[RMDB]
RNA sequence: GGGAACGACUCGAGUAGAGUCGAAAAACGGGCAGUGGCGAUGGCAACGCGGCAGCCGCAGGGUCGACUUCUUCGCAGCCGCAACAGACGGGAGACGGGCAAAGAGGGGUGCUCGUUCUGUUGGAAGGUAGGCACCGAUUUUCGAAUCGGUGCCUACAAAAGAAACAACAACAACAAC
Reactivity to 2A3 in 0.01 (KOAc 150mM, MgCl2 10mM, bicine 150mM(pH8.5), 24C), signal-to-noise 2, nucleotides 027 to 126: a000c010g000g000g030c000a080g010u120g010g000c020g070a170u120g040g090c030a000a080c140g000c000g000g030c040a000g010c000c020g000c030a080g080g070g010u040c030g020a150c080u090u050c000u020u040c000g000c140a030g030c010c050g000c000a000a000c000a010g050a020c050g000g030g000a090g000a020c000g000g000g000c020a160a170a000g020a000g000g030g030g050u020g000c000u080c040g020u110u020c020u000g020u000u000g010g050a050a070g160